[RMDB]
RNA sequence: GGGAACGACUCGAGUAGAGUCGAAAACGGACCUCCGGUGAACCGGUUGUCGACCAACGGCAUGGCCGGGUAGCCGCGUCCGGCGCGGAUAACCGCUGAAGGCAUCUAAGCGGGAAGCCGUUCCCGAUCAGUGACGGGAAUUCGUUCCCGUCACUGAAAAAGAAACAACAACAACAAC
Reactivity to DMS in 0.01 (KOAc 150mM, MgCl2 10mM, bicine 150mM(pH8.5), 24C), signal-to-noise 2, nucleotides 027 to 126: c030g000g000a020c000c000u000c120c040g000g020u040g000a160a300c000c000g010g000u000u000g000u000c030g000a130c200c300a110a080c000g040g000c010a080u120g010g020c000c000g000g000g000u000a300g010c000c000g000c190g000u000c000c000g010g000c280g000c000g000g000a010u040a120a280c000c000g010c010u000g000a190a170g000g010c150a020u010c010u000a210a060g000c000g000g000g000a130a130g010c000c020g000u000u000c030c030c000g000a090
Reactivity to 2A3 in 0.01 (KOAc 150mM, MgCl2 10mM, bicine 150mM(pH8.5), 24C), signal-to-noise 4, nucleotides 027 to 126: c010g000g010a000c010c030u040c030c000g030g030u090g040a140a030c010c000g010g000u050u010g020u010c010g020a200c040c100a160a160c030g000g000c020a030u070g130g000c000c000g000g010g020u020a000g000c000c000g000c010g000u000c000c000g000g010c060g010c000g000g000a010u030a080a080c000c000g000c000u010g050a110a050g070g040c070a070u040c050u050a010a010g000c000g000g020g030a040a000g030c000c000g000u030u000c000c000c000g000a110
The record gives the reactivity of an RNA of 177 nucleotides to DMS and 2A3. Conditions: 150 mM KOAc, 10 mM MgCl2 and 150 mM bicine (pH 8.5), 24 C. The data come from the RNA Mapping Database (RMDB), library RFM100. The DMS profile rests on 2,086 reads. For DMS the reverse transcriptase was MarathonRT.